[RMDB]
This 177-nucleotide RNA was probed chemically with 2A3 and DMS. It was measured as part of the RMDB library OK2TRN. DMS adducts were read by reverse transcription with MarathonRT. For 2A3 the reverse transcriptase was SuperScript II with manganese. For DMS, 6,015 sequencing reads were counted. The 2A3 profile rests on 1,668 reads. The reactions ran in a buffer of 150 mM KOAc, 10 mM MgCl2 and 150 mM bicine (pH 8.5), at 24 C.

RNA sequence: GGGAACGACUCGAGUAGAGUCGAAAAGGAAUUGGAACCUUGGAACCAAGGCCGGCCAAGGAACCAAUUCCUUAAUUAAUUCCGGUUAAGGUUGGUUAAUUGGCCUUGGCCGGCCAACCGGCCAAGGUCUGUUGCUGAAAUUCGUUUCAGCAACAGAAAAAGAAACAACAACAACAAC
Reactivity to 2A3 in 0.01 (KOAc 150mM, MgCl2 10mM, bicine 150mM(pH8.5), 24C), signal-to-noise 1, nucleotides 027 to 126: g010g000a020a020u110u090g050g050a050a030c000c000u020u010g110g010a170a140c020c010a030a040g030g000c050c010g020g000c000c000a000a000g010g000a010a010c000c000a000a000u050u070c010c000u000u000a000a000u000u010a000a020u040u040c070c040g020g030u010u020a010a000g030g030u020u080g070g020u100u110a170a060u290u150g130g000c030c000u000u010g000g020c000c000g010g020c010c010a000a000c000c020g020g040c000c000a000a000g020g010
Reactivity to DMS in 0.01 (KOAc 150mM, MgCl2 10mM, bicine 150mM(pH8.5), 24C), signal-to-noise 5, nucleotides 027 to 126: g000g000a070a030u000u010g000g000a100a240c000c000u010u000g000g020a060a110c050c030a090a300g000g010c090c040g000g000c000c010a020a010g010g000a020a200c000c000a010a010u000u000c000c000u000u000a000a020u000u000a070a140u000u000c070c040g010g000u000u000a040a070g000g010u010u010g010g000u000u010a100a140u000u000g000g000c000c000u000u000g000g010c020c000g010g000c060c110a050a060c070c060g000g010c010c000a010a020g000g010